RNA sequence: GGGAACGACUCGAGUAGAGUCGAAAACAACCAGUUAAAGAAAAAUACUCAUUUGGGGAAUAUAUAACUAUCAACUGUGAUGUUGGAUAUGAGGUUAUUGGUGCUUCGUACAUAAGUUGUACAGCUAAUUCUUGGAAUGUUAUUCCAUCAUGUCAACCACUUCUCGUUAUUUCGAUAACGAGAAGUGAAAAGAAACAACAACAACAAC
Reactivity to DMS in 0.01 (KOAc 150mM, MgCl2 10mM, bicine 150mM(pH8.5), 24C), signal-to-noise 2, nucleotides 027 to 156: c050a060a300c030c000a200g000u010u000a100a070a120g010a030a130a100a160a070u000a100c010u000c030a150u000u010u000g030g000g040g010a140a110u010a120u000a070u000a060a120c050u010a110u000c020a060a050c030u000g000u000g020a040u010g010u000u000g020g010a110u000a040u000g000a080g040g010u000u000a050u000u010g000g020u000g010c020u000u000c080g030u000a020c040a050u010a130a130g060u010u000g000u000a040c040a150g020c080u010a060a120u010u010c020u000u010g030g000a020a080u010g040u000u000a210u000u000c020c000a010u010c010a030u000g010u010c040a040a080c010
Reactivity to 2A3 in 0.01 (KOAc 150mM, MgCl2 10mM, bicine 150mM(pH8.5), 24C), signal-to-noise 5, nucleotides 027 to 156: c030a010a050c030c020a030g030u070u130a140a120a070g080a060a130a030a050a060u110a080c050u040c080a130u080u100u200g040g010g010g030a080a010u100a020u040a020u050a170a060c070u050a060u140c020a010a040c020u030g040u090g120a070u050g030u050u040g060g000a010u000a040u080g030a040g040g060u100u080a050u060u060g110g000u050g050c030u050u150c080g010u010a000c000a030u130a130a180g070u130u060g020u020a020c020a020g000c000u040a070a060u090u050c050u050u050g000g040a040a000u060g070u290u160a050u110u000c020c010a020u050c020a020u060g050u060c010a030a010c030
Structure probing data (DMS and 2A3) for a 207-nucleotide construct. Conditions: 150 mM KOAc, 10 mM MgCl2 and 150 mM bicine (pH 8.5), 24 C. It was measured as part of the RMDB library OK3TST. DMS adducts were read by reverse transcription with MarathonRT. Reactivities are given for positions 27 through 156.